[RMDB]
RNA sequence: GGGAACGACUCGAGUAGAGUCGAAAAUUAAAUAAACGGCACCUAUAAGGUGGUGCGGAACCAGCGUGACCUAGGAACACGCAACGAGCAGUCUCCUAUGACUGCAAAGGUAUGGUAAAUAAAAAAACGUAAUAUACCUGUUCGCAGGUAUAUUACGAAAAGAAACAACAACAACAAC
Reactivity to 2A3 in 0.01 (KOAc 150mM, MgCl2 10mM, bicine 150mM(pH8.5), 24C), signal-to-noise 3, nucleotides 027 to 126: u030u020a020a020a070u150a020a090a030c030g120g000c000a000c010c010u110a100u050a300a130g180g020u090g010g000u030g000c000g000g000a020a020c030c020a010g000c000g010u000g020a060c030c070u050a050g160g060a150a020c000a000c010g020c010a020a020c020g010a020g000c000a000g000u000c040u060c040c060u180a110u300g010a000c010u020g000c000a030a040a010g030g010u100a050u070g020g010u070a090a130a060u160a100a110a020a000a010a000a000
Reactivity to DMS in 0.01 (KOAc 150mM, MgCl2 10mM, bicine 150mM(pH8.5), 24C), signal-to-noise 2, nucleotides 027 to 126: u000u000a070a040a080u020a020a120a140c120g000g010c020a000c000c000u000a120u010a100a090g020g030u010g010g000u000g010c000g010g020a110a060c030c030a080g000c000g020u000g020a140c080c110u000a170g010g000a140a120c020a020c020g010c000a120a030c100g000a290g000c000a000g010u000c000u000c270c100u000a110u000g000a000c000u010g000c000a020a060a050g000g000u000a050u010g010g000u000a050a080a110u060a070a020a050a050a100a020a120